Structure probing data (2A3 and DMS) for a 177-nucleotide construct. The reactions ran in a buffer of 150 mM KOAc, 10 mM MgCl2 and 150 mM bicine (pH 8.5), at 24 C. DMS adducts were read by reverse transcription with MarathonRT. For DMS, 2,535 sequencing reads were counted. Source: RMDB library TTRDEL, as collected in RNAgym. Values cover nucleotides 27 to 126. The 2A3 profile rests on 5,003 reads.
RNA sequence: GGGAACGACUCGAGUAGAGUCGAAAAGAUAUGGACCCAGGCUAGAUGUGACUCGGAAACGAGUUUAUCAUCUUGGACCCUGGUCCUAAGUCAAAGUCUCGGAAAGGGUUCGCCCUUUCCGAGACAACCUACUUUUGUACUUCGGUACAAAAGUAGGAAAAGAAACAACAACAACAAC
Reactivity to 2A3 in 0.01 (KOAc 150mM, MgCl2 10mM, bicine 150mM(pH8.5), 24C), signal-to-noise 3, nucleotides 027 to 126: g030a030u090a070u160g010g010a030c060c080c080a020g020g040c020u020a010g010a010u010g020u030g010a000c010u000c010g000g080a040a040a070c020g020a010g000u050u110u110a190u110c000a000u000c000u050u090g130g070a230c040c010c030u020g000g020u030c000c010u050a160a030g030u030c050a130a100a090g010u000c000u000c000g000g050a020a000a020g080g020g050u110u220c280g180c020c010c000u010u000u010c000c000g010a010g000a010c000a000a000
Reactivity to DMS in 0.01 (KOAc 150mM, MgCl2 10mM, bicine 150mM(pH8.5), 24C), signal-to-noise 3, nucleotides 027 to 126: g000a060u000a300u020g000g000a010c070c030c050a050g010g000c010u000a010g000a010u000g010u000g000a000c000u000c000g020g000a110a130a180c000g010a010g000u000u010u010a120u010c000a010u000c000u000u010g030g000a160c190c010c010u000g010g000u000c000c000u000a020a140g000u000c030a100a110a160g010u000c000u000c000g000g000a000a020a030g000g010g010u000u010c260g020c000c000c000u000u000u010c000c000g010a010g010a000c020a010a040